[RMDB]
RNA sequence: GGGAACGACUCGAGUAGAGUCGAAAAAAGCGAACUGACUUCGCACCCCUUUUAUUAGUUGACUAGAUCAACACACUAGUGGUGUUUUUAAUCAGUACUUAAAGCUGUUUUUAAUUAACGAAACAACCAGGUACAGCUAUUUCGAUAGCUGUACCUGAAAAGAAACAACAACAACAAC
Reactivity to 2A3 in 0.01 (KOAc 150mM, MgCl2 10mM, bicine 150mM(pH8.5), 24C), signal-to-noise 2, nucleotides 027 to 126: a000a000g000c020g020a030a000c040u030g070a020c050u070u020c010g000c000a030c000c000c020c040u060u040u100u040a230u070u120a060g000u030u000g010a010c030u080a090g070a300u030c010a020a020c020a010c010a000c020u050a050g030u000g070g020u020g030u030u110u050u100u060a040a040u010c010a000g000u040a130c030u060u080a120a090a000g050c010u000g100u030u020u050u000u070a130a130u140u070a050a050c070g090a080a010a000c030a000a010c080
Reactivity to DMS in 0.01 (KOAc 150mM, MgCl2 10mM, bicine 150mM(pH8.5), 24C), signal-to-noise 2, nucleotides 027 to 126: a100a050g030c010g030a110a020c040u000g010a090c110u010u010c300g000c000a070c060c000c070c060u000u000u000u050a110u000u000a080g020u000u010g000a010c010u010a110g000a200u000c040a000a000c020a140c200a040c060u000a030g010u020g000g000u010g000u010u000u000u010u020a070a050u000c000a000g000u010a100c160u020u000a050a050a110g010c060u000g020u000u010u010u000u010a060a140u010u000a060a100c130g000a090a060a060c070a030a060c140